[RMDB]
RNA sequence: GGGAACGACUCGAGUAGAGUCGAAAACAAAUAAAACCCCAAAGCUGCAAAACAUCAAUUCGUGUAACUCUUCUAGGUCCAUUUUGUUAUUGCAUAGCAGCAGAUGGCCAUCAUGAUGCUACAAACCCUACUCGUGAUCAUUCGUGAUCACGAGUAGAAAAGAAACAACAACAACAAC
Reactivity to 2A3 in 0.01 (KOAc 150mM, MgCl2 10mM, bicine 150mM(pH8.5), 24C), signal-to-noise 2, nucleotides 027 to 126: c010a000a100a000u200a060a100a040a060c040c000c010c000a000a010a110g040c020u060g020c080a070a030a080a050c020a040u070c050a030a190u200u040c020g010u040g030u090a090a090c020u030c040u250u070c070u060a040g010g050u050c040c010a010u010u100u070u030g050u040u070a140u030u110g020c100a080u050a100g010c030a000g000c010a000g030a030u030g010g000c030c000a010u000c010a050u070g030a000u070g020c010u050a030c040a010a070a090c010c000
Reactivity to DMS in 0.01 (KOAc 150mM, MgCl2 10mM, bicine 150mM(pH8.5), 24C), signal-to-noise 1, nucleotides 027 to 126: c060a100a100a140u000a060a060a070a230c060c010c040c030a070a090a120g000c020u000g010c010a080a090a060a040c120a060u050c040a060a060u000u000c060g010u000g010u010a010a080c030u010c080u000u010c130u000a050g010g010u010c010c030a040u010u030u000u000g030u010u010a030u000u010g030c080a140u000a040g000c040a010g000c000a060g010a130u010g000g000c000c030a090u000c100a060u010g000a030u000g030c040u000a060c110a120a050a060c120c090